[RMDB]
RNA sequence: GGGAACGACUCGAGUAGAGUCGAAAAGAUAUGGACCGUGUGCAGAGCAGUGGUCGGAAACGACCAUACUGCGACGAAGCACCGGUCCUAAGUCAAAAUCGUCACUGAUCUUCGGAUCAGUGACGAACACUAUCUGAAACUUCGGUUUCAGAUAGUGAAAAGAAACAACAACAACAAC
Reactivity to DMS in 0.01 (KOAc 150mM, MgCl2 10mM, bicine 150mM(pH8.5), 24C), signal-to-noise 6, nucleotides 027 to 126: g000a020u000a030u010g000g000a010c000c000g010u020g030u000g040c000a020g010a020g030c000a020g000u000g000g000u000c000g020g000a010a010a020c000g010a010c000c000a050u000a100c060u000g000c000g010a180c280g000a150a160g000c000a010c000c000g010g010u010c000c000u000a000a070g000u000c010a140a080a120a180u000c010g010u000c000a010c000u000g000a010u000c000u000u010c250g040g000a010u000c010a010g010u000g010a000c000g010a020a070
Reactivity to 2A3 in 0.01 (KOAc 150mM, MgCl2 10mM, bicine 150mM(pH8.5), 24C), signal-to-noise 6, nucleotides 027 to 126: g010a010u010a000u050g010g000a000c010c010g120u190g000u010g280c020a010g000a020g030c000a010g040u000g010g000u000c000g000g000a010a000a000c000g000a000c000c000a010u120a070c010u000g010c030g070a210c020g000a010a000g020c000a000c010c000g000g000u000c000c000u000a000a000g000u000c000a000a000a010a300u060c000g000u010c000a000c000u000g000a010u010c010u050u180c300g070g000a000u000c000a000g000u010g000a000c000g000a000a000
Structure probing data (DMS and 2A3) for a 177-nucleotide construct. DMS adducts were read by reverse transcription with MarathonRT. For DMS, 15,788 sequencing reads were counted. The reactions ran in a buffer of 150 mM KOAc, 10 mM MgCl2 and 150 mM bicine (pH 8.5), at 24 C.